[RMDB]
The data come from the RNA Mapping Database (RMDB), library PDB130.
An RNA of 207 nucleotides, treated with DMS and 2A3 and read out base by base.
DMS adducts were read by reverse transcription with MarathonRT.
The RNA was probed in 150 mM KOAc, 10 mM MgCl2 and 150 mM bicine (pH 8.5) at 24 C.
RNA sequence: GGGAACGACUCGAGUAGAGUCGAAAAAAGCGUGUACGCCUCGGGCUUUGAAGUAUGUUUUAGCUCUCAGAGCUUCUACACAUUUCGAUAUCAGAAUUUCUGAUAUUAGCCCUUUUAAUAAAGCAGUUACUGUACCUAAGAACAGUAAGACAGAUCGCCUUCGAUAUAUCUUCGGAUAUAUCGAAGGAAAAGAAACAACAACAACAAC
Reactivity to DMS in 0.01 (KOAc 150mM, MgCl2 10mM, bicine 150mM(pH8.5), 24C), signal-to-noise 1, nucleotides 027 to 156: a030a050g020c030g020u000g040u000a100c040g000c040c030u000c090g050g050g000c000u000u000u010g010a040a020g060u000a020u000g000u000u000u000u000a040g010c000u000c000u010c120a240g010a030g020c000u000u000c030u000a020c020a050c010a040u010u000u000c000g020a010u010a000u000c010a010g010a160a270u010u000u000c030u010g010a010u000a000u000u000a060g000c030c000c000u000u000u010u010a030a170u000a070a080a090g020c080a120g000u000u000a030c000u000g020u000a120c050c070u010a100a070g000a040a020c010a030g000u000a020a030g010a110c100a100g000a150u010c040g000
Reactivity to 2A3 in 0.01 (KOAc 150mM, MgCl2 10mM, bicine 150mM(pH8.5), 24C), signal-to-noise 3, nucleotides 027 to 156: a000a010g100c060g010u140g030u050a030c030g000c030c040u050c070g010g030g000c010u030u110u240g020a020a020g010u030a040u020g030u020u020u020u010a000g000c000u010c060u070c100a070g000a000g040c000u010u000c010u020a000c010a000c000a030u000u030u030c020g010a010u000a000u000c020a010g110a260a220u110u300u160c010u000g000a000u000a020u030u020a000g010c000c000c000u060u090u040u070a100a070u100a060a070a000g050c080a020g020u030u020a000c000u010g030u100a100c020c080u140a110a050g050a100a010c000a010g020u030a020a020g070a040c070a040g100a070u100c080g050